[RMDB]
RNA sequence: GGGAACGACUCGAGUAGAGUCGAAAAAUAGUUAUCAAGUGGUGGCAUUUUAGAACACAAAGGGACAGCAGAUGCCAUCUCUGUCAACUCCUUCCCUCUACAGAUGAGGAAACUUGGGCUAGAGGAGCAAUGCUCCGUACUUCGGUACGGAGCAUUGAAAAGAAACAACAACAACAAC
Reactivity to 2A3 in 0.01 (KOAc 150mM, MgCl2 10mM, bicine 150mM(pH8.5), 24C), signal-to-noise 2, nucleotides 027 to 126: a000u070a010g010u040u040a060u260c070a220a040g030u020g040g000u030g010g000c020a010u010u050u050u100a100g050a120a040c100a000c090a200a240a090g050g030g060a060c050a050g090c000a010g040a030u000g040c000c000a010u000c020u030c000u010g080u020c040a000a050c050u000c010c020u090u070c000c030c010u020c000u040a050c080a120g160a270u260g020a090g020g050a040a020a030c040u050u030g060g000g000c040u000a010g010a010g030g020a030g060
Reactivity to DMS in 0.01 (KOAc 150mM, MgCl2 10mM, bicine 150mM(pH8.5), 24C), signal-to-noise 4, nucleotides 027 to 126: a090u010a040g010u000u000a090u000c080a080a040g010u000g000g030u000g010g020c000a010u000u000u000u000a140g010a110a100c130a110c150a070a100a120g020g010g010a080c140a050g020c120a060g000a030u000g000c000c010a030u000c010u000c020u000g000u010c150a040a060c040u000c070c030u000u010c080c000c010u000c070u010a250c090a070g000a100u000g010a070g000g010a060a030a060c030u000u000g000g000g000c170u000a040g010a050g000g010a150g010